This 177-nucleotide RNA was probed chemically with DMS. The RNA was probed in 150 mM KOAc, 10 mM MgCl2 and 150 mM bicine (pH 8.5) at 24 C. DMS adducts were read by reverse transcription with MarathonRT.
RNA sequence: GGGAACGACUCGAGUAGAGUCGAAAAAACAUUCGAUCGGGGAUCAUGGGGUUGACCUCGAUUCUUUGUGUCAUGGCGACUGCAGCCACCGAUGAAGGCCUUUGUAUGUUCCUCAUCCCUAUCGUCAGAUGGCCCUAAUGUUCGCAUUAGGGCCAUCAAAAGAAACAACAACAACAAC
Reactivity to DMS in 0.01 (KOAc 150mM, MgCl2 10mM, bicine 150mM(pH8.5), 24C), signal-to-noise 1, nucleotides 027 to 126: a070a020c030a060u000u000c170g030a000u000c010g040g020g000g000a150u000c050a060u010g000g060g030g020u000u000g000a120c020c010u000c030g010a050u000u000c040u000u000u000g020u010g000u000c010a100u000g020g010c040g020a130c110u010g000c130a150g000c060c040a070c100c070g000a090u010g020a050a110g000g020c110c080u000u020u000g040u000a070u000g010u000u000c000c020u000c160a060u000c000c020c000u000a130u020c090g010u000c190a060